An RNA of 207 nucleotides, treated with 2A3 and DMS and read out base by base. For DMS the reverse transcriptase was MarathonRT. The reactions ran in a buffer of 150 mM KOAc, 10 mM MgCl2 and 150 mM bicine (pH 8.5), at 24 C. The DMS profile rests on 4,586 reads. 2A3 adducts were read by reverse transcription with SuperScript II with manganese.
RNA sequence: GGGAACGACUCGAGUAGAGUCGAAAAUGGGAGGAGGCGAAGCUCUGUUGAAAGGCAGGUUUUGCUCUGGACUGCCAGCAUUCUGCCAGGUCUCCUGAGGAGAGCUGGUUCCCAGAGUGAUUAUCUUUCCUGAGCCAAGAGCCAGGUGCUCAGUGAAGAUGCUACCUAAUUUCGAUUAGGUAGCAUCAAAAGAAACAACAACAACAAC
Reactivity to 2A3 in 0.01 (KOAc 150mM, MgCl2 10mM, bicine 150mM(pH8.5), 24C), signal-to-noise 4, nucleotides 027 to 156: u090g020g010g030a060g020g020a030g000g020c060g010a030a010g020c020u020c030u070g060u080u080g060a100a070a020g050g010c060a040g020g020u040u050u050u060g000c000u020c010u030g060g020a100c050u100g010c000c000a000g000c000a080u120u040c010u070g180c040c010a030g000g100u130c250u150c150c010u040g010a070g060g040a010g010a020g000c000u000g010g000u050u100c000c000c000a010g010a000g000u040g030a060u050u090a060u110c050u010u050u020c000c000u000g000a000g010c020c030a070a020g040a000g060c030c010a010g000g050u110g010c040u010c030a040g050u090g130a080a030
Reactivity to DMS in 0.01 (KOAc 150mM, MgCl2 10mM, bicine 150mM(pH8.5), 24C), signal-to-noise 2, nucleotides 027 to 156: u000g020g050g020a080g000g020a140g000g020c060g010a150a120g000c030u000c010u020g030u000u000g030a080a070a090g040g020c240a090g000g020u000u000u000u000g000c000u010c010u010g020g010a090c070u030g000c000c020a060g010c030a090u000u000c030u010g030c050c020a050g040g000u010c040u000c020c030u000g010a300g000g000a040g030a080g040c020u000g030g020u010u000c030c000c020a010g000a080g010u000g000a060u000u000a090u000c000u000u000u000c020c020u000g020a060g020c020c070a060a110g010a170g020c000c030a090g010g020u000g020c000u000c060a100g020u020g010a070a160